[RMDB]
RNA sequence: GGGAACGACUCGAGUAGAGUCGAAAACGACAAGGGUGUAAAGAUCGCUCUUUUACUCGGCAUGAAACCACCGUUAUCGGGUCAACAGAGUAGUUGCAAAUGACAACAAUGCUCAGGGUUAUGCUCUAAAAGUUCGUACCCUUCGGGGUACGAACAACUAGAGCCUUAUGUUCGCAUAAGGCUCUAGAAAAGAAACAACAACAACAAC
Reactivity to DMS in 0.01 (KOAc 150mM, MgCl2 10mM, bicine 150mM(pH8.5), 24C), signal-to-noise 1, nucleotides 027 to 156: c000g040a130c060a010a040g020g020g060u010g000u010a160a090a090g000a090u010c080g010c060u000c010u020u000u010u040a100c040u000c020g060g020c060a140u000g020a110a050a100c040c000a120c000c000g000u000u010a110u010c040g010g000g000u020c050a040a140c130a130g000a040g050u000a020g040u020u000g000c060a090a040a160u000g000a240c010a040a060c050a010a110u000g010c000u000c030a100g000g000g010u010u000a020u010g010c010u000c060u000a030a040a110a200g020u000u000c000g010u000a040c010c020c010u000u010c290g040g020g010g040u000a000c000g010a030a000c010a040a050
Reactivity to 2A3 in 0.01 (KOAc 150mM, MgCl2 10mM, bicine 150mM(pH8.5), 24C), signal-to-noise 4, nucleotides 027 to 156: c070g070a010c050a060a050g030g060g010u050g070u160a140a120a020g120a110u180c040g020c020u040c020u000u050u030u060a140c080u050c060g010g000c020a050u140g090a120a010a020c040c020a020c020c010g100u110u110a100u240c040g000g010g040u060c040a010a060c030a080g020a000g010u050a010g010u020u010g030c050a070a200a300u160g040a090c000a040a000c000a030a170u100g000c010u040c040a040g040g010g020u080u060a090u100g030c010u010c010u110a070a070a000a040g000u000u000c000g000u000a000c000c010c000u000u030c140g060g000g010g000u000a000c000g000a000a000c000a000a000

This 207-nucleotide RNA was probed chemically with DMS and 2A3. 2A3 adducts were read by reverse transcription with SuperScript II with manganese. The RNA was probed in 150 mM KOAc, 10 mM MgCl2 and 150 mM bicine (pH 8.5) at 24 C. DMS adducts were read by reverse transcription with MarathonRT. The data come from the RNA Mapping Database (RMDB), library M2RFPK.